[RMDB]
RNA sequence: GGGAACGACUCGAGUAGAGUCGAAAAUCGCGCUCGCGUGGCCGGCGAAGGGCGCGGUCGUCGAAACGUUCCAGCCCGGCCGCAAUCGCGGCAUCCGGAUCGUCGGGCGCGCGGGCGAUCCGGUGCAGCUCCAUAUCACUUUCGAGUGAUAUGGAGCAAAAGAAACAACAACAACAAC
Reactivity to 2A3 in 0.01 (KOAc 150mM, MgCl2 10mM, bicine 150mM(pH8.5), 24C), signal-to-noise 2, nucleotides 027 to 126: u070c010g030c000g010c050u010c010g030c020g020u010g050g260c000c000g000g000c010g010a100a090g000g020g000c020g000c130g020g030u030c010g030u030c090g160a120a200a150c030g070u210u060c030c010a020g020c020c000c000g050g000c010c010g000c010a160a200u300c160g030c030g010g000c020a060u150c070c050g140g050a150u050c000g020u010c000g030g020g030c000g000c000g010c000g030g000g000c000g000a000u000c000c030g080g050u160g020c100a060
Reactivity to DMS in 0.01 (KOAc 150mM, MgCl2 10mM, bicine 150mM(pH8.5), 24C), signal-to-noise 2, nucleotides 027 to 126: u000c090g010c020g000c050u000c000g000c020g000u010g030g010c020c020g020g000c020g000a030a210g010g000g040c020g020c100g000g010u000c050g000u000c300g010a080a070a150c040g010u010u000c000c000a300g020c000c000c020g010g010c000c020g050c000a130a050u000c190g010c000g090g000c000a060u010c090c150g010g010a150u010c000g020u000c000g010g000g020c020g000c010g010c030g010g000g000c000g000a030u000c020c060g010g010u000g020c140a190